[RMDB]
Description: Structure probing data (DMS and 2A3) for a 177-nucleotide construct. Conditions: 150 mM KOAc, 10 mM MgCl2 and 150 mM bicine (pH 8.5), 24 C. For DMS the reverse transcriptase was MarathonRT. Values cover nucleotides 27 to 126. The DMS profile rests on 3,348 reads. Source: RMDB library TTRINS, as collected in RNAgym. Reactivities are rounded to 0.1 and cut off at 0 and 3.
RNA sequence: GGGAACGACUCGAGUAGAGUCGAAAAGAUAUGGAGCUGUUUGAGCUCAACAGGAGCGAUGAAAGGGUUAACUCGGAAACGAGUUAACCCUGGAGCUCCGUUGAGCAAUGAUGACAGCUCCUAAGUCCGUAUAGACUGAGUUCGCUCAGUCUAUACGAAAAGAAACAACAACAACAAC
Reactivity to DMS in 0.01 (KOAc 150mM, MgCl2 10mM, bicine 150mM(pH8.5), 24C), signal-to-noise 3, nucleotides 027 to 126: g010a080u000a300u010g020g010a020g030c010u000g010u000u000u000g000a190g010c000u000c000a000a010c010a160g050g010a010g010c010g000a120u010g010a180a200a030g000g000g010u000u000a010a010c010u000c000g020g000a110a060a200c000g000a030g000u000u000a000a000c000c000c000u000g010g000a060g000c000u000c010c000g030u000u000g000a000g000c010a060a050u000g000a180u000g000a000c010a010g010c000u010c000c000u000a000a110g000u000c040
Reactivity to 2A3 in 0.01 (KOAc 150mM, MgCl2 10mM, bicine 150mM(pH8.5), 24C), signal-to-noise 1, nucleotides 027 to 126: g000a020u110a100u250g000g000a010g020c020u030g040u080u040u070g080a030g050c000u010c000a000a000c040a190g050g030a000g010c050g300a300u040g060a030a040a020g050g000g020u000u010a000a000c000u010c010g030g070a110a120a080c000g020a000g000u030u000a000a000c010c010c000u000g010g000a000g030c000u000c000c000g010u010u010g000a000g000c000a040a100u290g020a040u180g010a030c000a000g000c000u000c000c000u000a010a000g010u000c020